[RMDB]
RNA sequence: GGGAACGACUCGAGUAGAGUCGAAAACUGGCUUAACCGCUGCGGUUGUUCGCGACGAGGAGUCCUUUGACUUUGUCAUCGAGGCGGGCGCCCUCAUGUUGGCCGACAAUGGCAUUUGCUGCAUUGACGUAAUAUCCAGUUUCGACUGGAUAUUACGAAAAGAAACAACAACAACAAC
Reactivity to 2A3 in 0.01 (KOAc 150mM, MgCl2 10mM, bicine 150mM(pH8.5), 24C), signal-to-noise 5, nucleotides 027 to 126: c020u030g010g010c020u240u280a060a000c010c020g030c060u030g020c040g020g010u050u110g020u100u090c000g010c030g130a060c020g000a050g050g010a010g010u040c020c060u070u130u300g010a020c020u070u040u130g150u170c030a090u010c070g020a050g060g150c010g000g010g000c000g010c000c020c010u020c000a030u150g020u030u030g040g010c020c030g030a050c070a050a090u080g090g020c040a060u120u120u290g060c050u030g010c000a090u040u070g040a030
Reactivity to DMS in 0.01 (KOAc 150mM, MgCl2 10mM, bicine 150mM(pH8.5), 24C), signal-to-noise 8, nucleotides 027 to 126: c100u010g020g000c020u000u020a060a070c060c050g010c040u000g000c300g010g010u000u010g010u000u010c020g020c040g010a130c030g020a100g020g010a070g000u010c010c300u000u000u020g000a030c010u000u000u010g020u010c080a070u000c030g000a130g010g000c020g010g000g000c040g010c130c010c020u000c050a050u010g000u000u000g010g010c020c010g000a140c130a040a060u000g010g010c020a160u000u000u000g020c070u000g000c070a080u000u000g010a300